[RMDB]
RNA sequence: GGGAACGACUCGAGUAGAGUCGAAAAGCCUUGCGGUCCAGAUGCUUCGGGUUGGCGAUCUUCUCGCCUGUCGACAGGACAGCAAAGUCCUUCACACCCAGGUCCACCCCGACCGCGCUGCCGGUCUUCCGACCUAAUAGUUCGCUAUUAGGUCGGAAAAAGAAACAACAACAACAAC
Reactivity to DMS in 0.01 (KOAc 150mM, MgCl2 10mM, bicine 150mM(pH8.5), 24C), signal-to-noise 2, nucleotides 027 to 126: g020c130c020u000u000g000c030g080g040u000c060c050a130g020a100u000g040c120u010u010c020g000g000g000u070u000g010g020c060g000a050u030c240u000u000c140u010c020g030c000c000u010g000u000c060g020a040c250a050g010g000a050c000a050g000c090a030a090a060g020u000c020c050u000u000c040a040c100a170c080c030c010a070g020g010u000c030c030a180c010c000c040c110g000a070c040c010g010c000g040c100u010g000c060c020g010g000u020c030u000
Reactivity to 2A3 in 0.01 (KOAc 150mM, MgCl2 10mM, bicine 150mM(pH8.5), 24C), signal-to-noise 4, nucleotides 027 to 126: g050c000c000u040u080g000c030g010g010u040c030c020a080g040a200u120g080c070u030u090c040g050g000g040u070u060g020g000c010g040a030u060c060u220u060c060u060c020g010c010c010u010g050u010c010g020a030c040a040g010g040a010c010a010g040c040a210a050a030g030u010c010c000u040u040c020a030c000a000c040c000c000a010g030g020u000c020c020a060c020c000c000c000g000a010c000c010g000c030g000c030u040g020c020c010g020g010u020c000u010